[RMDB]
RNA sequence: GGGAACGACUCGAGUAGAGUCGAAAAAGAGAAUUUCACCACUACCAUUUACUCACAUCUGUUGAGAUUGUACUAUUUCAACUCAAGAUUUGAUCAGUGUAUGUCAUAAAGUAACAAGUAGUACGCUAAGUCAGAAAACUUAAAGGAAACAUUAAAAGUCACCAUUAAAUUUCGAUUUAAUGGUGACAAAAGAAACAACAACAACAAC
Reactivity to DMS in 0.01 (KOAc 150mM, MgCl2 10mM, bicine 150mM(pH8.5), 24C), signal-to-noise 2, nucleotides 027 to 156: a080g000a200g000a090a100u000u000u000c000a110c020c040a070c030u020a080c020c020a170u000u000u000a060c040u000c090a120c100a100u000c000u010g010u000u010g030a050g010a060u000u000g020u000a100c150u000a110u010u000u000c020a040a030c020u010c040a090a170g010a150u000u000u000g020a060u000c040a090g010u000g040u010a090u010g010u010c060a100u000a060a040a050g010u020a040a040c120a070a040g000u000a040g040u000a020c040g010c050u000a030a100g000u010c060a170g000a130a070a050a090c060u000u000a010a060a070g030g000a140a090a100c050a070u000u000a070a090a110a260
Reactivity to 2A3 in 0.01 (KOAc 150mM, MgCl2 10mM, bicine 150mM(pH8.5), 24C), signal-to-noise 3, nucleotides 027 to 156: a010g120a020g050a050a060u050u060u080c070a080c050c010a040c020u040a040c030c010a080u040u120u130a090c020u080c010a050c010a090u030c050u050g050u110u030g020a040g000a060u000u080g000u060a110c100u070a080u020u060u070c010a070a020c010u020c050a080a060g020a090u060u020u170g050a040u060c040a020g050u000g020u170a060u090g060u050c030a020u080a150a080a010g060u030a100a000c020a090a000g000u010a010g010u020a010c020g010c050u060a070a040g020u060c060a050g090a110a150a090a050c070u100u080a060a030a010g080g030a040a170a000c030a050u000u000a060a000a090a080